[RMDB]
RNA sequence: GGGAACGACUCGAGUAGAGUCGAAAAUCUUUUGUAUGACUCCUUCCCUGUGAAAUGGCUUCUCCAUGUAGUUCAGCCCCACAGGUGCCCUCAGAAAACACGAAGUGCUUUCUGCACGUGUCGCGGCUCGGAUUCUCUAAUUCGUUAGAGAAUCCGAAAAAGAAACAACAACAACAAC
Reactivity to 2A3 in 0.01 (KOAc 150mM, MgCl2 10mM, bicine 150mM(pH8.5), 24C), signal-to-noise 2, nucleotides 027 to 126: u020c010u020u230u080u160g060u030a160u140g080a070c040u040c010c000u040u020c010c010c000u040g000u000g030a150a170a140u090g050g020c020u280u180c030u300c030c090a170u200g030u150a070g020u030u040c040a030g030c000c000c000c000a030c010a020g080g000u030g000c030c020c000u060c020a030g060a050a150a010a000c050a010c080g120a300a030g020u020g040c030u030u180u080c030u070g000c030a010c030g020u000g000u010c060g010c040g120g000c030
Reactivity to DMS in 0.01 (KOAc 150mM, MgCl2 10mM, bicine 150mM(pH8.5), 24C), signal-to-noise 3, nucleotides 027 to 126: u010c020u010u010u000u000g020u020a050u010g010a080c060u010c020c080u000u000c080c000c000u000g020u010g000a070a100a130u020g010g010c080u000u000c050u000c020c110a120u000g000u010a050g000u010u000c080a040g010c020c020c150c060a040c040a040g000g020u000g020c050c080c070u010c060a060g000a050a030a030a040c030a020c020g020a100a110g020u000g020c020u000u010u010c040u000g010c110a040c090g000u010g010u000c060g040c100g010g000c100
The record gives the reactivity of an RNA of 177 nucleotides to 2A3 and DMS. For 2A3, 1,226 sequencing reads were counted. Source: RMDB library OK2TST, as collected in RNAgym. For DMS, 2,991 sequencing reads were counted. Reactivities are given for positions 27 through 126.